[RMDB]
RNA sequence: GGGAACGACUCGAGUAGAGUCGAAAAAACAUUUGUCACAGCCGUGCUCACCGCCACGGACAGUAAACCCCUGAACGGGGUUGUCAGUAGUAGCUAUUAGUGGCAUCAGCUACUGCUGUAAACCCACACUCAACUGUUGGUUCGCCAACAGUUGAGUAAAAGAAACAACAACAACAAC
Reactivity to DMS in 0.01 (KOAc 150mM, MgCl2 10mM, bicine 150mM(pH8.5), 24C), signal-to-noise 2, nucleotides 027 to 126: a060a040c100a110u000u010u030g040u010c000a040c000a130g030c000c100g000u010g020c050u000c080a020c120c130g020c180c060a030c090g000g000a040c120a090g000u000a060a050a080c060c000c000c010u010g000a130a170c260g020g000g020g000u000u000g010u010c000a000g010u010a010g000u000a000g020c000u030a110u000u020a050g030u020g010g000c020a050u030c190a030g000c000u000a010c000u010g000c020u010g000u000a050a040a070c010c010c000a140c220
Reactivity to 2A3 in 0.01 (KOAc 150mM, MgCl2 10mM, bicine 150mM(pH8.5), 24C), signal-to-noise 3, nucleotides 027 to 126: a000a000c120a080u100u080u080g060u040c010a010c000a050g010c000c050g020u040g000c000u020c010a100c010c040g060c040c000a040c030g020g010a020c010a000g000u050a000a070a100c000c000c000c030u060g060a110a040c070g030g000g000g000u010u000g000u020c000a000g010u000a000g000u010a000g010c010u010a040u170u060a200g030u010g090g010c000a020u050c030a070g000c000u000a000c000u010g010c010u030g000u010a030a020a020c000c040c000a030c000